[RMDB]
This 177-nucleotide RNA was probed chemically with DMS and 2A3. Conditions: 150 mM KOAc, 10 mM MgCl2 and 150 mM bicine (pH 8.5), 24 C. For DMS, 6,039 sequencing reads were counted. DMS adducts were read by reverse transcription with MarathonRT. Reactivities are given for positions 27 through 126. It was measured as part of the RMDB library OK2TST.

RNA sequence: GGGAACGACUCGAGUAGAGUCGAAAAUCUAGCUGGGAGCCACUUCUGGAGAUGAUUCCAAUAACAUUCCACCUAUCAAAAGGGCAUUCUGAAAUGGAUCCUGCUUUCUCUUUUGAUAUUUUAACUACAUUAAUACUCGUUUCGACGAGUAUUAAUGAAAAGAAACAACAACAACAAC
Reactivity to DMS in 0.01 (KOAc 150mM, MgCl2 10mM, bicine 150mM(pH8.5), 24C), signal-to-noise 6, nucleotides 027 to 126: u010c090u000a060g010c030u010g010g010g010a050g000c030c030a060c060u000u010c040u020g020g000a070g010a050u000g010a120u000u010c070c070a090a100u010a080a100c110a140u000u000c040c040a090c100c070u000a050u000c100a040a050a070a060g010g010g000c150a040u000u000c050u000g000a050a060a070u000g000g000a050u000c040c040u000g010c040u000u000u000c030u000c010u010u000u000u010g000a050u000a050u010u000u000u010a040a110c100u010a140
Reactivity to 2A3 in 0.01 (KOAc 150mM, MgCl2 10mM, bicine 150mM(pH8.5), 24C), signal-to-noise 3, nucleotides 027 to 126: u050c010u000a020g050c020u070g050g020g010a010g050c060c010a050c020u050u000c020u070g030g020a110g020a050u080g020a040u190u000c020c000a060a080u150a070a050c050a060u110u070c030c030a090c020c020u080a050u100c050a020a050a030a010g000g020g000c000a030u090u050c020u080g040a070a070a060u060g010g000a020u030c010c000u010g020c010u020u080u010c050u010c000u030u100u060u080g070a070u080a160u150u150u100u110a060a040c040u110a020